[RMDB]
RNA sequence: GGGAACGACUCGAGUAGAGUCGAAAAGAUAUGGACGCGCGGAUUGAAGAGCCUUGGAUUUAUAUAGGAAGCAUAUCGGAAACGAUAUGCGCUAUAUUGUCAGGCUCCAAUCCGCGCGUCCUAAGUCCAGUUGACAUAAGUUCGCUUAUGUCAACUGAAAAGAAACAACAACAACAAC
Reactivity to DMS in 0.01 (KOAc 150mM, MgCl2 10mM, bicine 150mM(pH8.5), 24C), signal-to-noise 2, nucleotides 027 to 126: g000a090u000a300u000g010g010a030c000g020c010g030c000g010g000a020u000u000g000a180a190g010a030g030c000c000u000u020g030g010a020u000u020u000a000u000a010u000a000g000g020a140a210g020c000a010u000a000u020c010g000g010a160a110a270c000g010a020u000a000u000g000c010g000c000u000a010u000a000u000u000g010u000c000a050g010g000c010u010c040c020a020a010u000c010c010g000c000g000c000g000u000c000c000u000a020a090g000u000c050